[RMDB]
RNA sequence: GGGAACGACUCGAGUAGAGUCGAAAAUCAAAGGAAGUAACCUCUGGAUCAAACGUAAUUUGUACUGCUUCGACAUGGCCGGUUUUAUUCGUACAUACCUGUUCAUAAGUAGGGUUAUCAACAUGACCAUACGUUCGGAGUUCGCUCCGAACGUAUGAAAAGAAACAACAACAACAAC
Reactivity to 2A3 in 0.01 (KOAc 150mM, MgCl2 10mM, bicine 150mM(pH8.5), 24C), signal-to-noise 3, nucleotides 027 to 126: u060c050a050a040a090g080g040a050a060g070u070a030a050c030c020u000c030u070g010g040a080u070c070a100a070a060c060g050u080a100a120u080u060u090g020u030a040c010u010g050c010u030u060c040g080a030c000a080u070g030g000c050c050g010g030u050u100u000u090a050u090u110c040g020u010a020c030a050u070a030c010c010u030g060u050u080c010a040u060a200a020g010u080a040g070g040g000u020u050a090u060c020a030a000c030a100u140g070a050c030
Reactivity to DMS in 0.01 (KOAc 150mM, MgCl2 10mM, bicine 150mM(pH8.5), 24C), signal-to-noise 4, nucleotides 027 to 126: u010c040a080a110a090g010g010a140a120g010u010a080a070c040c010u020c030u010g010g010a090u000c040a030a070a060c180g010u010a080a100u010u010u020g000u010a090c040u000g000c040u000u000c110g020a040c100a030u000g010g010c050c040g000g000u000u000u000u010a090u020u000c090g020u010a080c090a080u000a110c060c040u000g000u010u000c050a060u000a040a080g000u010a060g000g000g000u010u010a060u000c100a060a070c120a080u000g000a130c160
Overview
The data come from the RNA Mapping Database (RMDB), library OK2TRN. Chemical mapping of a 177-nucleotide RNA with 2A3 and DMS. High 2A3 reactivity points to a flexible backbone, as in loops and unpaired stretches.